An RNA of 177 nucleotides, treated with DMS and 2A3 and read out base by base. Source: RMDB library OK2TRN, as collected in RNAgym. Reactivities are given for positions 27 through 126. The RNA was probed in 150 mM KOAc, 10 mM MgCl2 and 150 mM bicine (pH 8.5) at 24 C. DMS adducts were read by reverse transcription with MarathonRT. DMS (dimethyl sulfate) methylates the pairing face of unpaired adenines and cytosines. For 2A3, 1,249 sequencing reads were counted.
[RMDB]
RNA sequence: GGGAACGACUCGAGUAGAGUCGAAAAAAUGUAAGCGGGUCUUUUGACCACAAUGAAAUCGUUAGCGGGAAUUCUCCAUUUUCCCACAUGUUCUCCUUCGAUUUCAAGACUAACAUCCGCCGGAGAAAAAUGAGUACACAUUCGUGUGUACUCAUUUAAAAGAAACAACAACAACAAC
Reactivity to DMS in 0.01 (KOAc 150mM, MgCl2 10mM, bicine 150mM(pH8.5), 24C), signal-to-noise 2, nucleotides 027 to 126: a110a030u000g000u000a060a050g040c070g000g000g030u000c020u000u010u020u020g010a060c030c020a050c140a050a090u000g010a000a020a000u000c010g010u010u000a040g020c080g010g000g000a020a050u000u010c090u010c050c050a130u000u000u000u000c010c010c000a070c110a090u010g000u000u000c010u000c010c020u000u000c010g010a020u010u000u000c010a020a070g020a170c070u000a090a040c050a030u000c040c040g030c070c080g010g020a130g000a030a070
Reactivity to 2A3 in 0.01 (KOAc 150mM, MgCl2 10mM, bicine 150mM(pH8.5), 24C), signal-to-noise 1, nucleotides 027 to 126: a020a060u100g010u060a050a050g040c060g000g040g010u020c020u080u290u110u210g020a030c040c010a000c030a020a080u080g000a040a000a000u000c020g050u100u030a010g030c060g030g020g020a020a010u120u020c050u050c080c010a050u110u080u030u010c020c040c000a040c030a080u190g040u010u000c000u020c010c000u020u020c010g000a000u000u030u000c010a040a050g070a050c020u030a050a000c010a050u020c010c030g000c050c020g210g010a040g000a090a220